Structure probing data (DMS and 2A3) for a 207-nucleotide construct.
The reactions ran in a buffer of 150 mM KOAc, 10 mM MgCl2 and 150 mM bicine (pH 8.5), at 24 C.
RNA sequence: GGGAACGACUCGAGUAGAGUCGAAAAAACGCUUCACAACCUGAAAGAAGCGCAUGUUAUCAGGACGGUUGAUCCAUUUACCGGUGCAGACCUCUGCAAACACCGGGUUGCAGAACAUCGCGACGGACAAGGGAGGAUACCUUCGGGUAUCCUCCAACUCCUUACUAGACUUCGGUCUAGUAAGGAGAAAAGAAACAACAACAACAAC
Reactivity to DMS in 0.01 (KOAc 150mM, MgCl2 10mM, bicine 150mM(pH8.5), 24C), signal-to-noise 2, nucleotides 027 to 156: a070a020c010g000c000u000u000c010a210c110a070a300c040c030u000g040a120a140a040g030a010a040g040c010g110c010a060u040g020u000u000a120u000c090a140g010g040a130c020g000g020u000u000g010a200u010c060c010a090u000u010u000a080c030c040g060g030u000g040c000a150g000a130c120c020u010c060u000g010c060a080a040a070c010a170c070c140g000g000g070u000u030g000c020a070g030a060a090c150a090u010c040g040c000g010a120c060g010g000a090c120a130a120g050g000g000a000g010g000a000u000a010c010c000u000u000c300g040g040g000u000a000u000c010c010u010c000c000a000a030
Reactivity to 2A3 in 0.01 (KOAc 150mM, MgCl2 10mM, bicine 150mM(pH8.5), 24C), signal-to-noise 1, nucleotides 027 to 156: a000a000c010g000c010u070u080c010a100c080a180a070c000c010u090g040a010a000a080g010a030a010g020c000g100c010a020u120g010u210u130a180u190c050a070g000g050a000c010g050g070u030u050g020a050u110c040c000a030u120u000u170a090c000c020g000g050u100g000c070a000g020a080c030c020u030c010u020g000c000a000a100a000c060a050c070c060g090g220g050u000u010g000c010a010g010a060a080c010a030u140c080g010c040g040a040c050g050g040a030c030a100a240g050g000g000a000g000g010a000u000a000c000c000u050u060c130g040g020g020u020a000u000c000c000u000c000c000a000a000

The 2A3 profile rests on 554 reads.